[RMDB]
RNA sequence: GGGAACGACUCGAGUAGAGUCGAAAAAUCGGCCCGUUGCGCGGUACUCGCCGUGUUUGACGCCGAUGGCGAGCAUGAUCAGUCCGAAGGCGAUCAUCGACGGUGCGACCAUCAUCAGGACGGUCUCCUGCAAGAACGUAUUCGUACGUUCUUGCAGAAAAGAAACAACAACAACAAC
Reactivity to DMS in 0.01 (KOAc 150mM, MgCl2 10mM, bicine 150mM(pH8.5), 24C), signal-to-noise 4, nucleotides 027 to 126: a040u000c020g010g000c000c010c030g020u000u000g020c200g010c080g000g010u010a080c050u000c060g000c000c000g010u010g010u010u010u000g010a050c000g010c010c000g010a170u010g010g010c020g010a060g010c180a130u000g010a110u010c030a150g010u020c010c030g000a060a300g010g010c020g000a090u000c020a020u000c110g010a030c020g000g000u000g000c160g010a060c010c010a050u000c020a010u000c030a060g000g000a050c030g000g000u010c020u000c020
Reactivity to 2A3 in 0.01 (KOAc 150mM, MgCl2 10mM, bicine 150mM(pH8.5), 24C), signal-to-noise 3, nucleotides 027 to 126: a000u030c010g010g010c030c010c040g030u020u050g030c090g000c080g020g020u070a220c010u020c040g000c020c010g020u070g300u030u060u030g020a010c000g000c000c010g010a010u020g020g000c010g010a030g030c080a070u130g040a110u160c020a030g120u000c000c020g090a100a050g010g000c020g020a140u000c000a010u010c010g040a020c020g000g000u000g000c010g030a030c010c000a010u050c000a010u030c010a020g010g040a000c040g040g020u030c040u000c030
Background
Conditions: 150 mM KOAc, 10 mM MgCl2 and 150 mM bicine (pH 8.5), 24 C. An RNA of 177 nucleotides, treated with DMS and 2A3 and read out base by base. For 2A3 the reverse transcriptase was SuperScript II with manganese. For 2A3, 3,493 sequencing reads were counted.